Chemical mapping of a 177-nucleotide RNA with 2A3 and DMS. The RNA was probed in 150 mM KOAc, 10 mM MgCl2 and 150 mM bicine (pH 8.5) at 24 C.
RNA sequence: GGGAACGACUCGAGUAGAGUCGAAAAAUUUGCCAGUGAUAUGAUGGCCUUGUCACAGAGAUCACAAGGGACACGGAGUUGACUUUUGCUCAAGGUGGAACGACAGAGCUGUGUAGGCAAGAUGAGAGUGUGAUAACUUAUUCGUAAGUUAUCACACAAAAGAAACAACAACAACAAC
Reactivity to 2A3 in 0.01 (KOAc 150mM, MgCl2 10mM, bicine 150mM(pH8.5), 24C), signal-to-noise 6, nucleotides 027 to 126: a000u100u090u100g040c010c000a030g050u060g130a120u100a050u290g160a040u060g030g020c000c000u020u030g000u020c000a010c010a030g080a010g020a100u040c010a040c040a130a050g020g000g000a020c010a010c020g050g020a030g040u040u070g180a220c080u140u140u210u210g000c010u020c020a050a050g180g000u030g000g030a040a010c020g060a010c030a050g020a010g000c010u020g020u010g020u210a130g020g000c030a010a010g030a030u150g080a070g020a010
Reactivity to DMS in 0.01 (KOAc 150mM, MgCl2 10mM, bicine 150mM(pH8.5), 24C), signal-to-noise 9, nucleotides 027 to 126: a100u030u020u010g010c010c010a080g010u010g010a100u020a050u010g000a110u000g010g010c020c030u000u010g010u000c030a080c040a050g010a070g010a070u010c030a090c110a120a190g000g010g020a300c050a040c060g000g000a070g010u010u010g030a090c160u010u010u010u010g000c040u000c020a100a070g010g010u000g010g000a190a150c040g010a110c210a070g000a050g010c010u000g000u000g010u000a080g010g000c020a020a030g010a110u010g010a110g010a150